[RMDB]
RNA sequence: GGGAACGACUCGAGUAGAGUCGAAAAUAGUUCACAGUUUAUGAGCGUAUUUCCUUCAUGCAGUGCAUAGAAUAAUGUUUUCAUACUCACUUUACCCUCAGGUGCUUCAAACUAACUUAGUUUGAUUGAUUUCAAAGCCUUUCGAGGCUUUGAAAUCAAAAGAAACAACAACAACAAC
Reactivity to 2A3 in 0.01 (KOAc 150mM, MgCl2 10mM, bicine 150mM(pH8.5), 24C), signal-to-noise 1, nucleotides 027 to 126: u080a000g060u020u030c050a060c040a060g030u030u100u120a240u130g010a050g000c000g030u010a060u010u000u110c000c050u010u030c000a000u000g000c140a020g220u080g110c000a000u040a120g150a130a000u150a020a040u170g000u070u060u020u030c000a000u020a120c000u000c110a000c000u000u020u100a070c000c000c000u120c100a030g050g050u130g030c000u040u020c030a010a010a010c000u040a020a100c080u040u040a020g020u000u000u000g000a000u000u120

The record gives the reactivity of an RNA of 177 nucleotides to 2A3. The data come from the RNA Mapping Database (RMDB), library RFM100. The RNA was probed in 150 mM KOAc, 10 mM MgCl2 and 150 mM bicine (pH 8.5) at 24 C. The 2A3 profile rests on 320 reads.